This 207-nucleotide RNA was probed chemically with 2A3.
[RMDB]
RNA sequence: GGGAACGACUCGAGUAGAGUCGAAAAUUAAUGAAGCAAAUCUCCAAACGCCAACGAUGAGCGUUUCGCAAUCGCCGCUUAAGGCUUUUGCUGAGGCUGCUUGAGCCUUGUUACCAAAGAAAAGCCGAAAACCCAAAUGUCUUCGGACAUUUGGGAAGGCUAUGGUUAGGUUCGCCUAACCAUAGCCAAAAGAAACAACAACAACAAC
Reactivity to 2A3 in 0.01 (KOAc 150mM, MgCl2 10mM, bicine 150mM(pH8.5), 24C), signal-to-noise 1, nucleotides 027 to 156: u170u100a000a100u120g050a090a010g040c040a080a050a140u060c080u010c040c070a090a090a010c000g000c010c020a130a050c230g150a240u200g010a030g020c000g000u030u030u080c010g000c020a000a020u010c020g000c020c000g050c090u130u270a080a110g000g000c000u020u000u000u000g030c020u030g000a000g000g000c040u070g020c020u100u070g010a000g000c010c000u020u010g050u080u110a140c020c030a000a010a030g000a000a070a020a000g050c030c070g030a050a000a030a050c000c000c000a010a000a000u010g000u020c000u010u020c120g080g010a010c000a000u000u000u000g000g000g000a010a010

Values cover nucleotides 27 to 156.
The 2A3 profile rests on 707 reads.
The reactions ran in a buffer of 150 mM KOAc, 10 mM MgCl2 and 150 mM bicine (pH 8.5), at 24 C.